[RMDB]
RNA sequence: GGGAACGACUCGAGUAGAGUCGAAAAGAUGCAGAGCGCAGCGAUGAGAAGGAGCGGCGCUUGUGACCGAACAUAUGCCCGAACACGAUCCGAGCUAUGGCAUCCCGGAUAUCGCUGAGCCCGCGGAUCACGUCAGUCAUUUCGAUGACUGACGUGAAAAAGAAACAACAACAACAAC
Reactivity to DMS in 0.01 (KOAc 150mM, MgCl2 10mM, bicine 150mM(pH8.5), 24C), signal-to-noise 2, nucleotides 027 to 126: g010a210u010g020c030a100g020a060g020c000g020c000a040g000c050g000a050u000g010a190g000a300a140g000g010a130g010c030g000g000c070g010c060u000u020g010u010g010a040c030c010g010a130a120c120a030u000a050u020g000c010c000c010g000a080a100c140a130c130g000a090u000c020c020g010a080g050c060u000a120u010g010g010c060a100u010c030c010c010g000g010a180u020a050u000c010g020c000u000g000a030g000c010c000c050g000c020g000g010a160
Reactivity to 2A3 in 0.01 (KOAc 150mM, MgCl2 10mM, bicine 150mM(pH8.5), 24C), signal-to-noise 1, nucleotides 027 to 126: g110a020u110g000c020a000g080a040g130c020g000c010a000g000c020g000a040u070g140a020g050a140a000g050g030a050g030c000g010g020c020g000c000u010u040g050u060g010a080c020c030g020a050a030c040a050u160a050u300g010c050c000c010g020a040a010c090a020c140g020a030u000c030c000g010a010g020c010u030a070u090g080g040c040a070u060c040c000c000g040g010a090u080a010u090c020g000c010u000g000a010g000c000c000c000g000c000g000g010a030